[RMDB]
RNA sequence: GGGAACGACUCGAGUAGAGUCGAAAAGUUUUCACUGGAUCUGCACAUUGUUAUGAGGCGAUACUGUACAACAAAGGCAGCAUCGAUGCUCUCUUCAACAUGACCCCUCCAACUUCAGCUUUGGGGGCGACUGUGCACUGUUCGCAGUGCACAGUCGAAAAGAAACAACAACAACAAC
Reactivity to DMS in 0.01 (KOAc 150mM, MgCl2 10mM, bicine 150mM(pH8.5), 24C), signal-to-noise 1, nucleotides 027 to 126: g010u000u000u030u000c030a120c140u020g020g010a050u000c020u010g020c040a090c070a100u020u000g010u000u000a030u000g000a040g030g020c000g000a020u000a100c010u010g050u000a110c070a110a100c260a050a160a090g040g010c000a000g020c030a000u000c010g010a130u000g000c120u000c020u000c050u000u000c070a020a020c050a080u000g010a200c110c080c010c020u040c030c030a000a090c080u010u000c160a150g020c120u000u020u000g000g020g010g020g000
Reactivity to 2A3 in 0.01 (KOAc 150mM, MgCl2 10mM, bicine 150mM(pH8.5), 24C), signal-to-noise 1, nucleotides 027 to 126: g010u000u090u060u060c080a030c060u090g110g010a120u050c040u140g010c010a000c010a070u060u070g040u060u100a080u130g010a000g050g000c010g000a000u000a050c010u000g000u080a210c000a170a060c070a050a210a130g160g030c000a000g000c000a020u000c020g040a050u160g010c020u020c000u000c070u170u110c020a020a030c020a070u140g070a020c000c000c040c030u000c000c010a030a050c010u190u150c080a020g080c100u000u110u000g010g000g010g010g000
Annotation: The record gives the reactivity of an RNA of 177 nucleotides to DMS and 2A3. Reactivities are rounded to 0.1 and cut off at 0 and 3. Values cover nucleotides 27 to 126. The RNA was probed in 150 mM KOAc, 10 mM MgCl2 and 150 mM bicine (pH 8.5) at 24 C. For 2A3 the reverse transcriptase was SuperScript II with manganese. DMS (dimethyl sulfate) methylates the pairing face of unpaired adenines and cytosines. It was measured as part of the RMDB library OK2TRN.